[RMDB]
RNA sequence: GGGAACGACUCGAGUAGAGUCGAAAAGAGCUGAAGUACAGCAAGAACGACGAAAUCCUUGGCACAGCGUCGAAGAUAAGCGUGCCGAUUGCCAAGGAUUAACGGCACGCGAGGCGAAGACGCCAGAACGUGGAGGGUAGUUCGCUACCCUCCACGUAAAAGAAACAACAACAACAAC
Reactivity to 2A3 in 0.01 (KOAc 150mM, MgCl2 10mM, bicine 150mM(pH8.5), 24C), signal-to-noise 2, nucleotides 027 to 126: g130a060g000c000u000g060a090a080g110u260a160c000a000g000c000a030a000g090a090a000c110g190a000c010g010a080a060a060u000c000c010u000u000g010g000c010a030c010a170g070c160g140u050c140g080a110a050g080a160u220a000a070g010c000g000u000g010c000c000g000a120u050u040g000c000c020a000a000g090g030a030u050u000a040a020c000g010g000c020a000c000g000c000g030a050g030g010c060g060a050a080g030a220c050g000c000c000a000g110a060
Reactivity to DMS in 0.01 (KOAc 150mM, MgCl2 10mM, bicine 150mM(pH8.5), 24C), signal-to-noise 2, nucleotides 027 to 126: g000a080g000c000u000g000a090a210g000u130a150c070a040g030c030a160a260g050a100a240c090g020a000c300g000a040a000a000u020c090c000u000u000g000g000c000a060c300a060g000c100g000u010c000g000a280a100g000a100u090a140a300g000c010g010u000g000c000c000g000a150u000u000g020c000c070a000a070g000g000a000u000u000a010a100c110g000g020c000a000c000g050c000g080a060g010g030c010g000a250a060g000a080c020g070c020c170a080g000a030
An RNA of 177 nucleotides, treated with 2A3 and DMS and read out base by base. 2A3 adducts were read by reverse transcription with SuperScript II with manganese. For DMS the reverse transcriptase was MarathonRT. The RNA was probed in 150 mM KOAc, 10 mM MgCl2 and 150 mM bicine (pH 8.5) at 24 C. The data come from the RNA Mapping Database (RMDB), library OK1LIB.